[RMDB]
RNA sequence: GGGAACGACUCGAGUAGAGUCGAAAAGAUCACCUGUUCGCAGGUGAUCAAUCUCCCACUUGAUCGAAGUCUGACAGCCUCGUUGCCCACGAGGCACGGGCGUAUUGAUCCGCUUCGGCGGAUCAAACGUGUACAAAAAUUUCGAUUUUUGUACACGAAAAGAAACAACAACAACAAC
Reactivity to DMS in 0.01 (KOAc 150mM, MgCl2 10mM, bicine 150mM(pH8.5), 24C), signal-to-noise 8, nucleotides 027 to 126: g000a010u000c000a000c000c000u000g010u000u010c200g020c010a000g010g010u000g000a000u000c000a020a080u010c200u000c010c010c010a150c190u000u000g010a060u010c090g000a090a100g010u000c030u000g000a110c210a130g000c010c000u000c020g000u010u010g020c070c060c060a190c140g000a080g000g020c000a020c020g000g000g000c020g000u010a030u010u000g000a010u000c000c000g010c000u000u000c160g020g010c000g000g000a010u000c000a000a020a120
Reactivity to 2A3 in 0.01 (KOAc 150mM, MgCl2 10mM, bicine 150mM(pH8.5), 24C), signal-to-noise 8, nucleotides 027 to 126: g000a000u000c000a000c000c000u000g020u040u070c250g010c110a000g000g000u000g000a000u000c000a000a000u000c010u010c010c000c010a050c060u090u250g090a120u150c110g110a110a020g080u030c040u050g070a130c060a080g010c000c010u070c040g050u110u160g080c010c010c000a060c070g010a140g000g000c000a000c000g000g000g000c010g000u020a040u030u060g000a000u000c000c010g010c010u060u060c140g100g000c000g000g010a000u000c000a000a000a000

This 177-nucleotide RNA was probed chemically with DMS and 2A3. 2A3 adducts were read by reverse transcription with SuperScript II with manganese. The data come from the RNA Mapping Database (RMDB), library M2PK50. The reactions ran in a buffer of 150 mM KOAc, 10 mM MgCl2 and 150 mM bicine (pH 8.5), at 24 C.